An RNA of 207 nucleotides, treated with 2A3 and read out base by base. Conditions: 150 mM KOAc, 10 mM MgCl2 and 150 mM bicine (pH 8.5), 24 C.
[RMDB]
RNA sequence: GGGAACGACUCGAGUAGAGUCGAAAAGAUCGGAAACAGCAGCAGGUGAGUCCGCCUUAUGUGAAGGAUCGGCUGAAACACGAGGAAAUACUGAGCCAACGCAAGACGGUAGCCGAACAUUAGCAACAAAACGCUUACGUGUUCGCACGUAAGCGAACGAUCACGCAAAGUUCGCUUUGCGUGAUCGAAAAGAAACAACAACAACAAC
Reactivity to 2A3 in 0.01 (KOAc 150mM, MgCl2 10mM, bicine 150mM(pH8.5), 24C), signal-to-noise 2, nucleotides 027 to 156: g030a020u130c070g050g020a110a030a020c030a070g050c040a000g000c000a010g000g100u060g080a040g080u110c040c010g050c020c000u110u110a180u140g070u030g080a040a020g070g040a050u100c050g000g000c030u100g010a050a070a050c070a040c070g020a070g000g060a010a060a030u140a020c060u050g030a010g000c000c020a020a020c040g060c080a020a020g100a000c000g040g030u110a010g000c070c000g030a050a000c020a060u080u170a010g070c050a000a040c020a040a070a000a000c010g010c000u000u010a020c010g000u000g050u010u040c110g010c130a000c020g010u000a010a010g000c000g010a000a000